[RMDB]
Notes
Chemical mapping of a 207-nucleotide RNA with DMS and 2A3. The DMS profile rests on 4,540 reads. 2A3 is a SHAPE reagent: it acylates the 2'-hydroxyl of flexible nucleotides of all four kinds. Conditions: 150 mM KOAc, 10 mM MgCl2 and 150 mM bicine (pH 8.5), 24 C.

RNA sequence: GGGAACGACUCGAGUAGAGUCGAAAAAGUUUAAUCAUACCGUUGUGACGAAUGUUGAUCUCUUUACGGUUGCCAUUGUUGAGAUUGUAAACGUAGUGGUUGUACAUUUUGUACUUUUUGAUAAUGUCCGUCACGAUAAUAUCCUUGAUCACGCUCGCAGAGACCUUGAAUUCGUUCAAGGUCUCUGAAAAGAAACAACAACAACAAC
Reactivity to DMS in 0.01 (KOAc 150mM, MgCl2 10mM, bicine 150mM(pH8.5), 24C), signal-to-noise 1, nucleotides 027 to 156: a070g010u000u000u010a050a050u000c040a060u000a020c030c030g030u000u010g000u010g000a040c000g020a030a040u010g050u020u010g060a090u010c050u000c080u010u000u000a020c010g010g000u000u010g050c030c070a080u000u000g030u020u020g010a270g010a050u010u010g000u010a020a010a050c030g020u010a040g010u010g020g030u000u010g030u000a030c030a230u000u000u000u000g050u000a000c020u000u000u000u000u000g010a090u010a030a050u010g020u010c020c020g020u000c010a010c000g010a010u010a040a030u000a080u000c010c030u000u010g010a050u010c030a080c100g010c040u000c050g040
Reactivity to 2A3 in 0.01 (KOAc 150mM, MgCl2 10mM, bicine 150mM(pH8.5), 24C), signal-to-noise 1, nucleotides 027 to 156: a000g070u110u140u140a230a170u060c010a060u060a110c080c010g010u000u000g000u000g010a010c000g060a040a030u040g000u010u050g120a040u020c050u020c000u160u080u040a030c030g010g060u010u010g000c000c030a020u000u030g090u150u210g020a100g000a050u000u050g010u040a040a000a000c020g030u000a000g040u000g160g000u040u090g030u020a000c010a070u090u100u040u280g040u000a030c000u080u180u020u070u070g060a050u010a100a000u050g070u000c010c010g000u000c000a000c020g030a000u040a100a080u100a100u100c040c010u050u160g030a020u160c100a020c080g000c000u000c100g000